[RMDB]
RNA sequence: GGGAACGACUCGAGUAGAGUCGAAAAGGGUUUUGGUUCGCCAAAACCCAAAAUAAAAAGUACGAAACGCAACGUACGCCAAAAAGAUCGAAAGAUCAAAAAAAACUCAUUCCUUCGGGAAUGAGAACAUAACACCAUGGUUCGCCAUGGUGUUAUGAAAAGAAACAACAACAACAAC
Reactivity to DMS in 0.01 (KOAc 150mM, MgCl2 10mM, bicine 150mM(pH8.5), 24C), signal-to-noise 2, nucleotides 027 to 126: g010g000g000u000u000u020u000g000g020u000u010c220g040c000c000a000a000a010a000c000c000c000a010a010a050a050u000a090a040a030a110a100g000u010a010c000g000a090a050a130c150g030c230a120a100c000g000u000a000c020g000c100c090a030a060a070a080a070g000a000u000c020g000a110a060a120g010a040u020c020a010a000a010a040a060a070a050a090c010u000c000a020u000u000c000c020u000u000c180g030g010g000a000a000u000g000a000g000a020a080
Reactivity to 2A3 in 0.01 (KOAc 150mM, MgCl2 10mM, bicine 150mM(pH8.5), 24C), signal-to-noise 1, nucleotides 027 to 126: g040g000g000u000u010u000u010g020g020u000u060c170g060c010c000a000a000a000a000c000c000c020a000a030a000a000u060a000a050a000a000a000g010u000a000c020g080a220a230a010c120g040c150a070a000c020g000u010a000c000g000c000c000a080a120a020a060a010g000a000u000c000g040a050a050a010g010a000u000c000a090a020a020a000a000a000a010a030c000u010c000a000u010u040c000c000u000u040c190g140g000g000a000a000u020g010a000g000a000a000

An RNA of 177 nucleotides, treated with DMS and 2A3 and read out base by base.
For 2A3, 3,080 sequencing reads were counted.
For 2A3 the reverse transcriptase was SuperScript II with manganese.